[RMDB]
Chemical mapping of a 207-nucleotide RNA with 2A3 and DMS. In probing experiments dimethyl sulfate is read out at A N1 and C N3, which are open when not base-paired. For DMS, 2,104 sequencing reads were counted. Reactivities are rounded to 0.1 and cut off at 0 and 3. 2A3 adducts were read by reverse transcription with SuperScript II with manganese.

RNA sequence: GGGAACGACUCGAGUAGAGUCGAAAAGGAUCUGAGUACUUAUAAGUGCGAAGUGAGUGAGGGUCUUACGAGCACGAAUUACAUCCCUCUAUUAAGUAUCGAAGAUCGGCCGGAGAUCGAGAUACAACUAUUAACCGGCGACUGUACGAAGAUCCGAAAUUAUGCCAGUGUUCGCACUGGCAUAAUUAAAAGAAACAACAACAACAAC
Reactivity to 2A3 in 0.01 (KOAc 150mM, MgCl2 10mM, bicine 150mM(pH8.5), 24C), signal-to-noise 2, nucleotides 027 to 156: g010g000a000u000c000u010g030a030g020u010a020c040u110u130a060u080a300a050g000u030g000c000g070a080a000g020u010g010a010g000u070g000a010g000g000g030u160c000u010u020a000c010g000a000g010c010a010c050g040a080a050u110u020a060c020a110u070c000c040c000u000c010u040a210u150u130a190a000g000u000a000u010c000g020a070a000g010a000u010c020g040g000c000c000g000g000a080g000a000u000c000g000a000g000a040u000a020c000a020a010c030u100a100u240u060a090a040c000c000g000g060c010g060a060c070u100g000u000a000c000g010a000a000g000a010u000c000c000g000a000
Reactivity to DMS in 0.01 (KOAc 150mM, MgCl2 10mM, bicine 150mM(pH8.5), 24C), signal-to-noise 2, nucleotides 027 to 156: g010g040a000u000c000u010g030a300g010u000a070c030u010u000a080u010a050a160g050u000g020c030g020a120a240g000u000g000a090g000u000g030a070g020g010g050u010c050u000u000a020c010g000a280g000c010a030c010g000a080a080u000u000a070c110a240u000c000c000c000u000c030u000a180u010u010a000a140g020u020a010u000c000g010a170a210g000a030u010c020g000g010c000c020g000g030a200g000a040u000c000g030a300g000a040u000a020c070a050a100c150u000a120u000u000a050a090c040c020g000g030c020g040a180c180u000g030u000a050c050g020a220a070g000a040u010c000c000g010a140